[RMDB]
Structure probing data (2A3 and DMS) for a 177-nucleotide construct. The RNA was probed in 150 mM KOAc, 10 mM MgCl2 and 150 mM bicine (pH 8.5) at 24 C. Reactivities are given for positions 27 through 126. Source: RMDB library OK2TRN, as collected in RNAgym. For DMS, 10,183 sequencing reads were counted.
RNA sequence: GGGAACGACUCGAGUAGAGUCGAAAAUGGUACCCUGGAAGAGGGUCGCGCCUCGGCCAUCCGUCUGAACAGCGCCGAAACCAAGCGCCAACAGGCGGCCAUCGGUCUGGAAAUCUUCCGCAACGCCACUUCAAUGACUAUUCGUAGUCAUUGAAGUAAAAGAAACAACAACAACAAC
Reactivity to 2A3 in 0.01 (KOAc 150mM, MgCl2 10mM, bicine 150mM(pH8.5), 24C), signal-to-noise 4, nucleotides 027 to 126: u110g030g030u110a040c000c010c030u040g030g030a030a010g020a020g040g000g000u020c020g030c020g030c050c010u040c030g020g000c010c000a020u000c000c010g010u010c000u010g020a090a020c010a020g010c010g000c010c020g090a170a020a020c060c020a090a020g020c000g000c010c010a010a030c000a010g000g000c000g010g020c020c000a070u050c060g010g020u010c040u100g060g040a070a090a040u000c010u020u000c000c000g000c020a040a030c040g030c040c020
Reactivity to DMS in 0.01 (KOAc 150mM, MgCl2 10mM, bicine 150mM(pH8.5), 24C), signal-to-noise 9, nucleotides 027 to 126: u010g010g020u000a050c020c010c010u010g020g010a050a020g010a030g000g010g010u000c080g010c260g000c030c010u000c120g000g010c000c000a090u000c010c010g020u000c000u010g000a020a130c300a130g000c010g000c010c030g000a100a100a130c190c250a120a140g000c000g020c000c010a030a270c020a020g010g010c010g000g000c300c120a050u000c090g030g010u000c030u010g020g000a070a080a090u000c020u000u000c000c010g000c090a050a060c100g000c130c110